Chemical mapping of a 207-nucleotide RNA with DMS and 2A3. Values cover nucleotides 27 to 156. 2A3 is a SHAPE reagent: it acylates the 2'-hydroxyl of flexible nucleotides of all four kinds. The RNA was probed in 150 mM KOAc, 10 mM MgCl2 and 150 mM bicine (pH 8.5) at 24 C.
RNA sequence: GGGAACGACUCGAGUAGAGUCGAAAAUGCAAGGCCUGGAACAGACACAAGAUGGGCACAGAAUGGGGAUGCAGGCUUAGAACAGAUACACGGGCAGCUACCACUUGAGGCCUUAGCAGGUAUGGUCCUUUCUCAGCUGUGAGUUCCCUCUGCUCAAUCCCUUUUACCGAUUCGUCGGUAAAAGGGAAAAAGAAACAACAACAACAAC
Reactivity to DMS in 0.01 (KOAc 150mM, MgCl2 10mM, bicine 150mM(pH8.5), 24C), signal-to-noise 2, nucleotides 027 to 156: u020g030c030a030a000g020g020c000c000u000g050g020a140a130c090a100g020a170c100a080c100a040a110g010a090u010g000g020g030c030a080c090a120g000a070a070u000g030g040g000g020a120u000g040c040a090g030g020c060u000u000a090g000a060a150c140a070g000a110u010a030c130a100c080g000g020g030c010a170g000c030u010a130c030c010a080c070u000u000g010a050g010g020c030c020u000u000a040g020c050a050g030g050u000a070u030g000g010u000c030c000u010u000u020c000u010c060a070g000c000u040g030u010g000a100g000u030u000c000c000c010u000c050u000g000c030u000c060a050a300
Reactivity to 2A3 in 0.01 (KOAc 150mM, MgCl2 10mM, bicine 150mM(pH8.5), 24C), signal-to-noise 3, nucleotides 027 to 156: u110g000c020a030a020g020g000c010c000u050g040g050a090a070c050a080g110a020c050a020c030a150a040g030a080u080g010g000g030c080a090c030a060g150a100a070u140g020g000g020g020a010u120g010c040a010g010g010c000u040u080a010g010a070a030c080a070g090a140u170a100c070a010c060g000g010g000c000a030g020c010u030a030c030c020a060c070u050u010g050a010g040g050c000c000u030u020a030g000c040a010g010g030u070a060u080g040g010u110c000c010u020u060u000c040u010c020a030g000c010u020g040u040g100a040g020u010u010c010c000c000u020c010u010g010c000u020c010a050a190